Structure probing data (2A3 and DMS) for a 177-nucleotide construct. 2A3 adducts were read by reverse transcription with SuperScript II with manganese.
RNA sequence: GGGAACGACUCGAGUAGAGUCGAAAAGACGUUCAUGAUCUUACAUGAACGAGCAAACAAUUGUCCGUUGUUUGCAGCCUUCUGUAAGAUCAGGGGGUAACCUAACGAACGGACAAUUCGUUAGGAAGGACAGGUAACUAUUCGUAGUUACCUGUCCAAAAGAAACAACAACAACAAC
Reactivity to 2A3 in 0.01 (KOAc 150mM, MgCl2 10mM, bicine 150mM(pH8.5), 24C), signal-to-noise 4, nucleotides 027 to 126: g090a010c070g050u040u040c090a060u090g020a040u000c020u040u060a030c010a040u280g010a010a010c040g010a000g000c010a010a010a000c000a000a020u080u190g150u200c080c070g000u010u010g000u000u000u010g010c020a040g040c010c010u030u000c000u010g010u010a060a030g000a080u040c010a000g000g000g000g010g000u020a070a100c000c010u000a000a010c000g020a020a000c000g080g130a040c080a010a060u000u010c010g000u000u010a000g020g030a040a070
Reactivity to DMS in 0.01 (KOAc 150mM, MgCl2 10mM, bicine 150mM(pH8.5), 24C), signal-to-noise 4, nucleotides 027 to 126: g010a180c160g010u000u000c080a120u000g000a030u000c040u000u000a050c000a030u000g010a000a000c100g010a260g010c010a010a020a020c000a000a000u000u000g020u020c300c220g010u000u000g000u000u000u000g000c010a130g000c140c190u010u000c010u000g010u000a030a020g000a030u000c000a070g000g000g000g000g000u010a100a180c050c010u000a000a000c000g010a000a010c050g010g010a100c300a060a160u000u000c030g010u000u000a000g000g000a100a110